[RMDB]
RNA sequence: GGGAACGACUCGAGUAGAGUCGAAAAGAUAUGGAGCUUCUACCCACCGCUAAACUAAUGAAGGGAGCUUCUCGGAAACGAGAAGAACUACUCCCUUCAUUAGUAUUAGCGAGGAAGCUCCUAAGUCGAUCUGUAGAGAGUUCGCUCUCUACAGAUCAAAAGAAACAACAACAACAAC
Reactivity to DMS in 0.01 (KOAc 150mM, MgCl2 10mM, bicine 150mM(pH8.5), 24C), signal-to-noise 2, nucleotides 027 to 126: g000a270u050a130u010g000g010a010g000c010u000u000c000u000a180c020c020c010a300c060c000g010c000u000a000a020a010c010u000a000a030u010g010a030a010g000g000g000a010g000c020u000u000c000u000c000g000g010a060a180a100c000g020a010g000a040a000g000a080a010c060u020a300c000u000c000c000c000u000u000c000a020u000u010a000g010u000a060u000u000a000g000c050g000a080g000g000a030a000g000c000u010c000c010u000a050a090g010u010c140